[RMDB]
RNA sequence: GGGAACGACUCGAGUAGAGUCGAAAAAGCGGACUGCGGUGUACGCACCGCAGUCCGCACGGCCAGCGAAAACACAGGCGCCGUGCUUGCAACGAUCACUUCGCCUGCACCUGUGCUGCCCCAGAAAAUAGAGGUACAAGUUCGCUUGUACCUCUAUAAAAGAAACAACAACAACAAC
Reactivity to 2A3 in 0.01 (KOAc 150mM, MgCl2 10mM, bicine 150mM(pH8.5), 24C), signal-to-noise 1, nucleotides 027 to 126: a000g050c000g040g000a010c000u000g060c130g080g000u030g010u080a070c300g100c290a000c000c050g000c040a020g000u000c000c020g010c000a000c000g000g020c010c000a030g010c070g190a000a040a020a010c060a020c030a000g020g000c000g000c020c000g000u020g010c010u020u070g090c080a130a090c110g050a010u030c010a020c010u030u000c030g020c000c000u010g000c030a050c010c030u070g290u300g040c000u040g000c000c000c000c000a040g170a020a110a000